RNA sequence: GGGAACGACUCGAGUAGAGUCGAAAAAGCUGGUCAACGUGGGAGUGGGACGAGAAGCUGGGCUACUGCGCAGGCAUUUCCAAGUAUCAGGGUGAGAUUCUCUGCUACACGCUGCGUACCCACAAUACAAUCCAUACCGGUUCGCCGGUAUGGAUUGAAAAGAAACAACAACAACAAC
Reactivity to DMS in 0.01 (KOAc 150mM, MgCl2 10mM, bicine 150mM(pH8.5), 24C), signal-to-noise 3, nucleotides 027 to 126: a070g030c040u000g000g010u000c040a080a050c180g000u000g010g020g010a080g030u000g000g010g010a030c110g020a110g000a060a090g000c090u010g010g010g010c170u000a050c130u010g000c040g010c010a070g030g000c070a100u000u010u020c030c060a140a140g000u010a040u000c020a010g010g000g000u010g000a180g010a170u000u020c020u000c010u000g000c070u000a010c020a220c110g000c020u000g010c030g020u000a060c000c000c010a080c180a060a080u000a190
Reactivity to 2A3 in 0.01 (KOAc 150mM, MgCl2 10mM, bicine 150mM(pH8.5), 24C), signal-to-noise 1, nucleotides 027 to 126: a000g000c040u020g010g000u060c050a060a050c060g030u050g030g020g000a100g030u110g000g050g040a040c030g040a030g000a140a000g010c000u080g010g030g000c030u090a060c050u120g050c050g010c040a060g110g040c040a030u060u150u000c060c020a070a050g010u030a030u050c020a010g000g040g020u020g040a080g020a110u200u040c020u000c000u030g030c000u020a030c020a010c080g040c030u030g000c000g060u040a090c000c040c010a010c010a010a050u110a050